[RMDB]
RNA sequence: GGGAACGACUCGAGUAGAGUCGAAAACAUGGAGUCUUCGGACUCCAUGCACUACCGAAAUAAUGCCUCGGUAUUAAAGGCAAACCCUUGGAAACAAGGGAACGAUGUCACGAUUCGUCGUGACAAAUGCUGUCUUUGAAUUCGUUCAAAGACAGCAAAAAGAAACAACAACAACAAC
Reactivity to 2A3 in 0.01 (KOAc 150mM, MgCl2 10mM, bicine 150mM(pH8.5), 24C), signal-to-noise 3, nucleotides 027 to 126: c000a010u000g000g000a010g000u010c030u050u080c250g130g000a000c010u000c000c000a000u000g010c000a030c010u030a010c000c000g040a000a080a070u260a050a070u060g000c000c000u010c020g000g000u040a150u050u260a080a050a000g010g000c000a030a040a260c000c000c000u000u000g020g010a030a030a030c000a020a000g010g000g010a000a000c030g100a080u100g000u010c000a000c010g000a020u040u050c140g060u000c000g000u100g010a000c000a000a020a000
Reactivity to DMS in 0.01 (KOAc 150mM, MgCl2 10mM, bicine 150mM(pH8.5), 24C), signal-to-noise 3, nucleotides 027 to 126: c000a010u000g000g010a040g000u000c000u010u020c180g060g000a010c000u020c000c000a000u000g010c090a150c070u000a050c000c000g000a040a130a110u000a100a110u000g020c000c000u000c010g000g020u000a060u000u000a030a030a050g000g040c010a020a020a150c000c000c000u010u000g000g000a180a130a100c000a000a020g000g010g000a040a020c220g000a140u000g010u000c010a000c000g000a070u000u000c210g000u000c010g030u000g000a020c000a000a040a060
An RNA of 177 nucleotides, treated with 2A3 and DMS and read out base by base.
The DMS profile rests on 2,412 reads.
The data come from the RNA Mapping Database (RMDB), library M2PK50.
For 2A3 the reverse transcriptase was SuperScript II with manganese.
DMS adducts were read by reverse transcription with MarathonRT.
The reactions ran in a buffer of 150 mM KOAc, 10 mM MgCl2 and 150 mM bicine (pH 8.5), at 24 C.